[RMDB]
RNA sequence: GGGAACGACUCGAGUAGAGUCGAAAAUAAAACAGUGCGUGGUAGCACUACCAUGACCAUGUUUCGGCACAUGGUCAGCCGAGUACAGCUUCGCCUGUACUCAGCGAACAACAAGAACAACAAAAAACUCCUAAAUAAGCUUCGGCUUAUUUAGGAGAAAAGAAACAACAACAACAAC
Reactivity to 2A3 in 0.01 (KOAc 150mM, MgCl2 10mM, bicine 150mM(pH8.5), 24C), signal-to-noise 2, nucleotides 027 to 126: u110a000a070a010a040c050a020g010u000g010c030g040u100g120g190u220a030g000c010a000c010u020a020c000c070a050u090g010a000c010c000a000u010g070u000u120u160c120g200g020c070a000c000a020u000g000g000u000c000a010g000c000c020g000a000g010u000a000c000a000g000c050u150u230c120g070c050c020u010g000u000a010c010u000c000a000g000c020g030a040a040c020a030a010c020a000a110g040a180a050c050a010a010c050a050a090a030a010a010a060
Reactivity to DMS in 0.01 (KOAc 150mM, MgCl2 10mM, bicine 150mM(pH8.5), 24C), signal-to-noise 3, nucleotides 027 to 126: u000a050a070a090a150c120a050g020u010g030c000g000u010g060g000u010a160g000c020a010c020u000a050c060c020a230u010g000a020c000c010a020u000g020u000u000u000c180g020g010c170a110c000a020u000g000g010u000c000a030g030c000c020g000a000g010u010a000c020a010g000c020u020u000c270g010c250c010u000g000u000a000c000u000c010a020g020c000g010a070a040c140a020a010c110a110a120g030a060a040c160a010a010c080a030a030a120a090a030a070